[RMDB]
Chemical mapping of a 177-nucleotide RNA with DMS and 2A3. Values cover nucleotides 27 to 126. The RNA was probed in 150 mM KOAc, 10 mM MgCl2 and 150 mM bicine (pH 8.5) at 24 C.
RNA sequence: GGGAACGACUCGAGUAGAGUCGAAAACGACUUACCUUCGGGUAAGUCGACAUAGGUGAGUUCAUCGGAUAGCUGCCUAGGUGAGUUCAUCGGAUACCUGCCACAUGUAACGGUUCGCCGUUACAAAUUUCUUAGGAAAAUUCGUUUUCCUAAGAAAAAAAGAAACAACAACAACAAC
Reactivity to DMS in 0.01 (KOAc 150mM, MgCl2 10mM, bicine 150mM(pH8.5), 24C), signal-to-noise 5, nucleotides 027 to 126: c020g000a010c000u000u000a010c000c010u000u010c220g030g010g010u000a000a000g010u000c000g010a040c130a050u000a120g010g010u000g000a040g000u000u000c020a020u010c020g000g010a120u010a110g000c130u010g010c030c020u000a150g020g010u000g000a030g000u000u000c020a020u000c010g000g000a150u000a070c030c010u000g010c080c100a070c160a130u000g000u000a000a010c000g000g000u000u010c240g010c000c000g000u000u010a000c000a030a070a100
Reactivity to 2A3 in 0.01 (KOAc 150mM, MgCl2 10mM, bicine 150mM(pH8.5), 24C), signal-to-noise 3, nucleotides 027 to 126: c000g020a010c000u000u000a000c000c000u020u040c210g050g000g020u010a010a000g000u010c010g010a000c000a050u130a050g000g030u000g030a010g010u010u030c010a030u030c050g050g020a060u080a100g060c120u120g080c050c020u050a090g000g010u010g000a020g000u010u020c010a010u020c020g000g020a040u080a080c000c020u030g070c030c020a140c010a110u110g000u010a010a000c000g010g070u030u040c290g020c050c000g000u000u000a000c000a000a010a020